This 207-nucleotide RNA was probed chemically with 2A3. The reactions ran in a buffer of 150 mM KOAc, 10 mM MgCl2 and 150 mM bicine (pH 8.5), at 24 C. For 2A3 the reverse transcriptase was SuperScript II with manganese.
RNA sequence: GGGAACGACUCGAGUAGAGUCGAAAAAGUUGCCAAUGAUGACAACUACGGUGCUCAACUAGCUGCGUAAGUAGCUUUUUGUUACACCAUCUAGCGGUACGCCGCUAGCGGUUUUUAACAAGGUGCCAGUACCGCGUUAACGACUGUCACUUAGAACCCCCUUAGAUUGGUUCGCCAAUCUAAGGGGAAAAGAAACAACAACAACAAC
Reactivity to 2A3 in 0.01 (KOAc 150mM, MgCl2 10mM, bicine 150mM(pH8.5), 24C), signal-to-noise 1, nucleotides 027 to 156: a000g040u000u010g040c030c010a100a110u300g150a070u190g010a050c030a070a010c030u070a050c170g000g000u010g010c060u030c050a020a010c000u010a000g000c030u010g000c060g070u050a130a160g000u000a000g000c000u040u010u000u010u000g080u060u090a000c000a000c020c000a020u000c010u010a000g000c010g010g010u010a010c080g040c060c010g000c000u000a000g000c020g070g030u020u000u000u000u100a010a080c070a060a030g020g000u010g050c060c000a020g020u080a100c030c020g000c060g040u050u080a060a010c010g020a010c020u020g040u020c000a000c020u080u050a080g050a080a060c020